[RMDB]
RNA sequence: GGGAACGACUCGAGUAGAGUCGAAAAAGAAUACUUUUAGUACAAGCGAGUACACGCAGUAUACUGCCACUUGUGUGAGAAUACUUUAGUACAAGCGAGUACACGCAGUUUACUGCCACUUGUGUGAACUUGAGAUCAGGUUCGCCUGAUCUCAAGUAAAAGAAACAACAACAACAAC
Reactivity to DMS in 0.01 (KOAc 150mM, MgCl2 10mM, bicine 150mM(pH8.5), 24C), signal-to-noise 3, nucleotides 027 to 126: a090g020a120a060u060a050c040u010u000u020u000a170g030u030a070c080a040a180g000c030g000a140g000u030a120c180a120c300g000c050a000g000u000a010u000a010c000u010g000c020c180a050c020u000u020g000u000g020u020g000a120g000a140a050u000a070c020u010u010u020a130g030u010a020c110a090a210g010c080g000a080g000u000a070c090a070c300g000c030a000g000u000u000u000a010c000u000g000c020c050a010c040u000u030g000u030g030u000g010a070
Reactivity to 2A3 in 0.01 (KOAc 150mM, MgCl2 10mM, bicine 150mM(pH8.5), 24C), signal-to-noise 5, nucleotides 027 to 126: a000g170a050a020u210a120c010u060u120u100u130a090g090u050a110c040a170a010g020c030g050a010g050u120a080c080a030c090g000c010a010g000u000a020u010a020c000u000g010c000c000a010c010u040u020g000u020g000u080g100a080g090a130a100u140a090c050u160u180u190a100g060u070a020c030a020a020g040c020g080a020g050u090a070c050a010c080g000c000a000g000u010u030u020a000c000u010g000c000c000a010c000u040u010g020u010g070u050g090a050

Chemical mapping of a 177-nucleotide RNA with DMS and 2A3. For DMS the reverse transcriptase was MarathonRT.